[RMDB]
RNA sequence: GGGAACGACUCGAGUAGAGUCGAAAAGUAUCCCUAGAUGAUAAAACACGGCACAUGGCUCGUAAGAGCGGUUAAAUUAGCAAGUAAUGCAAAUUACGCGAGGUAACGCAUGGCCUAGGCUCGUUAGAAAAGGGAGAAUCCUUCGGGAUUCUCCCAAGCUAACAAGGAAGUUCGCUUCCUUGUUAGCAAAAGAAACAACAACAACAAC
Reactivity to DMS in 0.01 (KOAc 150mM, MgCl2 10mM, bicine 150mM(pH8.5), 24C), signal-to-noise 2, nucleotides 027 to 156: g020u000a100u010c010c000c000u000a130g020a160u020g010a110u000a050a100a070a170c090a100c100g020g040c000a110c030a140u000g000g010c000u000c010g000u010a140a140g000a080g040c000g010g010u000u000a040a070a120u000u000a140g020c070a080a100g020u000a050a020u000g020c130a060a100a080u000u010a010c020g020c010g000a150g010g020u000a020a060c070g030c050a070u000g000g000c050c030u000a150g030g000c030u000c080g000u000u000a100g000a050a050a090a200g000g000g010a010g000a020a000u000c010c000u000u000c290g070g050g000a030u000u000c010u000c000c010c000a000a000
Reactivity to 2A3 in 0.01 (KOAc 150mM, MgCl2 10mM, bicine 150mM(pH8.5), 24C), signal-to-noise 2, nucleotides 027 to 156: g020u040a150u080c000c000c000u020a020g030a170u100g040a040u130a110a130a000a010c040a060c060g000g000c010a010c000a200u030g070g010c000u010c030g050u030a110a030g020a000g120c050g000g030u040u030a060a070a050u020u040a020g010c030a080a120g050u060a060a020u070g050c050a200a020a000u070u000a000c000g000c000g010a040g070g000u020a080a000c030g020c100a060u020g050g000c000c040u020a040g050g000c030u020c120g060u050u030a080g080a050a160a080a060g020g010g000a000g000a000a000u000c000c000u030u040c140g010g000g010a010u010u000c000u010c000c000c000a000a000

Structure probing data (DMS and 2A3) for a 207-nucleotide construct. 2A3 adducts were read by reverse transcription with SuperScript II with manganese. It was measured as part of the RMDB library M2RFPK. The reactions ran in a buffer of 150 mM KOAc, 10 mM MgCl2 and 150 mM bicine (pH 8.5), at 24 C.